Notes:
The record gives the reactivity of an RNA of 207 nucleotides to DMS and 2A3. Source: RMDB library OK3TST, as collected in RNAgym. Conditions: 150 mM KOAc, 10 mM MgCl2 and 150 mM bicine (pH 8.5), 24 C.
[RMDB]
RNA sequence: GGGAACGACUCGAGUAGAGUCGAAAAUACAACAAACAUCUCAUGACUAUGAGGGGAUGAAAAUGGAUACCAAGGAUACCAAGAUGAUGGAACAAAAAGAAUUGAUUUGGAACAUGACGGCACUAUGGAUUCAUCGUAUUGGACCUCUGUGAUAUAACCCCAUUAAUUAUUUCGAUAAUUAAUGGGGAAAAGAAACAACAACAACAAC
Reactivity to DMS in 0.01 (KOAc 150mM, MgCl2 10mM, bicine 150mM(pH8.5), 24C), signal-to-noise 4, nucleotides 027 to 156: u020a100c080a070a100c070a120a090a160c030a100u000c020u000c020a110u000g010a200c120u000a090u010g010a100g010g000g030g000a130u000g000a060a060a080a100u010g010g020a110u000a080c040c040a090a100g000g000a200u010a090c020c020a090a080g020a090u000g010a050u010g010g020a060a180c040a030a040a100a080a140g010a080a140u010u000g000a130u000u000u000g030g000a080a080c040a080u000g020a080c100g020g010c010a060c050u000a090u000g020g000a130u000u000c030a030u000c080g050u010a120u000u000g020g000a090c030c020u010c040u010g020u000g010a100u000a050u000a080a170
Reactivity to 2A3 in 0.01 (KOAc 150mM, MgCl2 10mM, bicine 150mM(pH8.5), 24C), signal-to-noise 5, nucleotides 027 to 156: u100a010c030a090a000c040a070a130a040c030a080u000c010u000c020a100u110g100a130c080u170a090u180g060a030g010g010g020g020a010u030g070a060a040a040a030u090g040g020a040u050a140c030c040a030a030g050g000a010u050a190c010c010a010a020g010a020u070g000a000u010g010g040a020a010c040a020a060a020a010a030g110a050a050u130u060g060a060u090u110u170g080g010a060a020c030a040u100g040a020c040g030g030c060a010c080u040a050u090g020g020a020u030u010c010a010u010c030g010u030a040u030u030g010g020a020c010c000u000c080u020g080u030g100a020u010a010u000a150a040
For 2A3, 3,509 sequencing reads were counted.